An RNA of 177 nucleotides, treated with DMS and 2A3 and read out base by base.
2A3 adducts were read by reverse transcription with SuperScript II with manganese.
It was measured as part of the RMDB library OK1LIB.
The reactions ran in a buffer of 150 mM KOAc, 10 mM MgCl2 and 150 mM bicine (pH 8.5), at 24 C.

RNA sequence: GGGAACGACUCGAGUAGAGUCGAAAAAUCUGCCCGUACACGAUUUUGGUAUGACAUCAUAGUGUUAGUGAUGCUGAUUACGGAAUCGAGCGUCAGCUGGUCAGGUAGCGGUGGGUUGAGCAAAACACUUUCUGAGACACUUCGGUGUCUCAGAAAGAAAAGAAACAACAACAACAAC
Reactivity to DMS in 0.01 (KOAc 150mM, MgCl2 10mM, bicine 150mM(pH8.5), 24C), signal-to-noise 2, nucleotides 027 to 126: a090u010c080u060g010c000c010c000g000u000a080c210a150c060g000a030u000u000u000u030g020g010u050a010u020g010a230c010a030u020c010a010u000a060g010u030g060u000u020a070g010u000g050a000u010g030c120u000g010a070u000u010a060c090g000g020a030a010u000c020g010a100g000c050g000u010c100a020g000c010u020g020g050u000c040a030g030g020u000a090g000c120g030g000u030g000g000g000u030u010g000a150g000c140a090a050a040a020c250a080
Reactivity to 2A3 in 0.01 (KOAc 150mM, MgCl2 10mM, bicine 150mM(pH8.5), 24C), signal-to-noise 2, nucleotides 027 to 126: a000u030c010u030g040c000c010c010g000u070a020c090a010c000g020a010u000u000u010u180g200g000u090a020u160g030a060c000a010u070c030a030u050a160g170u090g060u300u080a040g010u020g090a020u000g000c050u020g020a050u040u120a040c020g080g090a000a000u000c030g030a060g010c040g080u070c010a050g030c060u060g050g000u020c020a040g010g010u000a020g000c070g000g050u030g000g050g000u030u060g050a020g060c000a030a120a000a000c070a100